[RMDB]
RNA sequence: GGGAACGACUCGAGUAGAGUCGAAAAAGGUCGGAGUACAGGUGACCGUCAACAUAGACGAACUUCGCGUCUUCGCUCUUGUUGCCGACGAGCAAUGUCGCGCUACCGGUGGCAACCGUCUGCGGUGCAGUAGCCUGUGGUUCGCCACAGGCUACUGAAAAGAAACAACAACAACAAC
Reactivity to 2A3 in 0.01 (KOAc 150mM, MgCl2 10mM, bicine 150mM(pH8.5), 24C), signal-to-noise 2, nucleotides 027 to 126: a000g110g030u090c030g010g010a040g050u090a030c010a070g050g030u040g090a090c050c010g040u010c010a160a110c050a300u150a120g000a010c000g030a080a030c050u110u100c090g020c030g090u030c000u000u030c040g000c000u050c000u030u060g060u100u150g060c000c000g090a100c040g000a010g020c020a060a110u160g030u080c030g000c030g010c130u170a140c000c050g050g000u020g000g030c040a090a300c030c000g050u000c030u070g070c030g060g000u090g080
Reactivity to DMS in 0.01 (KOAc 150mM, MgCl2 10mM, bicine 150mM(pH8.5), 24C), signal-to-noise 2, nucleotides 027 to 126: a040g010g010u000c020g000g000a100g030u000a090c020a070g010g000u010g020a080c170c000g000u000c020a080a090c210a120u020a080g000a050c000g000a070a080c070u000u000c080g010c050g000u010c030u010u000c050g000c050u000c040u000u010g000u000u000g010c000c020g020a090c070g000a090g030c100a060a110u010g000u000c020g010c070g000c060u010a070c080c050g010g020u000g000g000c030a040a050c010c050g010u000c050u000g010c000g000g020u020g000